[RMDB]
RNA sequence: GGGAACGACUCGAGUAGAGUCGAAAAGAUAUGGAAAUACGAAAGGCGCGAAACGUGCAGUCGGAAACGACUGGCACGGAGCCUAGUAUUUCCUAAGUCAAAGGUAAUUCAGUUCGCUGAAUUACCAGAUCUAUCAUAGGUUCGCCUAUGAUAGAUCAAAAGAAACAACAACAACAAC
Reactivity to 2A3 in 0.01 (KOAc 150mM, MgCl2 10mM, bicine 150mM(pH8.5), 24C), signal-to-noise 7, nucleotides 027 to 126: g010a010u010a010u060g000g020a000a010a000u020a020c060g110a300a300a230g020g000c040g030c160g160a190a050a000c000g000u000g000c000a000g000u000c010g000g000a000a000a000c000g000a010c010u060g160g030c000a000c000g010g000a000g000c000c000u020a040g000u000a000u000u000u000c000c000u000a000a000g000u000c030a120a080a060g000g000u010a010a000u000u000c000a000g080u030u200c300g040c140u000g000a000a010u000u010a000c000c010a000
Reactivity to DMS in 0.01 (KOAc 150mM, MgCl2 10mM, bicine 150mM(pH8.5), 24C), signal-to-noise 5, nucleotides 027 to 126: g000a020u000a010u020g000g000a010a010a000u000a010c000g010a080a210a050g010g020c000g070c270g010a080a110a090c010g020u000g000c000a030g000u000c000g020g000a000a010a020c000g000a010c000u000g030g040c010a010c000g010g000a010g020c010c000u000a120g010u000a000u000u000u000c000c000u000a000a060g000u000c000a100a120a150g000g000u000a000a000u000u000c000a010g010u000u020c300g020c000u000g000a020a010u000u000a000c000c000a050

Chemical mapping of a 177-nucleotide RNA with 2A3 and DMS. Values are in units of 0.01, from 0 to 300, in steps of 10.